[RMDB]
RNA sequence: GGGAACGACUCGAGUAGAGUCGAAAAGAGAUCAGGUCAUCCACGGUCAGCGGGCUGUCUUCCGGCACUUCGGUUACGAUUUCAUCGUGGAUGUGCAUGACGAUGCGGAAGCCCAUACGGUGCGCCUUUUUCAGACCUUCGGCGAGCACGUCGCGCGGCCGGACAACUCUUUCGAGAGUUGUCCGGCAAAAGAAACAACAACAACAAC
Reactivity to 2A3 in 0.01 (KOAc 150mM, MgCl2 10mM, bicine 150mM(pH8.5), 24C), signal-to-noise 1, nucleotides 027 to 156: g050a000g010a110u060c060a020g000g080u010c000a030u040c080c000a000c040g030g040u010c050a030g060c050g000g000g050c030u000g080u070c060u030u070c090c030g000g040c080a060c140u130u110c060g080g070u140u190a040c050g030a100u090u070u200c000a030u050c020g000u030g050g010a000u020g020u070g010c000a000u050g030a090c000g030a070u130g000c020g100g000a030a010g010c010c000c000a010u130a050c050g050g020u040g050c010g040c010c000u070u120u030u070u190c110a090g000a100c000c000u000u160c010g120g000c010g000a030g030c030a010c090g060u050c030g010c010g000c060g100